Notes: Chemical mapping of a 177-nucleotide RNA with DMS and 2A3. The reactions ran in a buffer of 150 mM KOAc, 10 mM MgCl2 and 150 mM bicine (pH 8.5), at 24 C. DMS adducts were read by reverse transcription with MarathonRT. It was measured as part of the RMDB library RFM100. The DMS profile rests on 1,209 reads.
RNA sequence: GGGAACGACUCGAGUAGAGUCGAAAAGGAUAAACUUAUCUACAGAAGUGUCUGUUACUGUUUUGGAAGAGUAAUACUGUUCGCUUAUCCAUAUUUCCCCGUUCUGGGGAAGCCUCAUGGGUAAAUUGAUACAUUUCUUCUUCGGAAGAAAUGUAUCAAAAGAAACAACAACAACAAC
Reactivity to DMS in 0.01 (KOAc 150mM, MgCl2 10mM, bicine 150mM(pH8.5), 24C), signal-to-noise 1, nucleotides 027 to 126: g000g000a050u000a060a100a110c060u000u000a130u020c070u020a110c090a130g000a080a110g000u010g000u080c040u000g030u000u000a120c110u000g000u000u040u030u020g020g000a120a060g000a040g000u000a080a070u030a300c110u000g010u000u000c020g040c120u000u000a000u000c000c000a000u000a120u000u000u000c000c000c000c000g060u000u020c170u040g020g030g000g020a000a000g000c300c180u040c090a050u000g000g060g020u000a000a010a110u010u020
Reactivity to 2A3 in 0.01 (KOAc 150mM, MgCl2 10mM, bicine 150mM(pH8.5), 24C), signal-to-noise 5, nucleotides 027 to 126: g030g000a070u100a070a170a040c040u080u070a100u080c060u110a060c020a040g080a110a040g080u020g040u090c050u060g040u060u060a030c020u040g150u100u110u120u120g130g030a110a050g020a050g080u070a040a080u060a180c080u040g060u040u050c030g000c070u020u020a010u010c000c000a000u030a040u060u000u000c000c000c000c000g180u300u150c110u300g000g000g000g000a000a010g020c000c040u090c080a030u030g000g000g010u020a040a060a070u030u020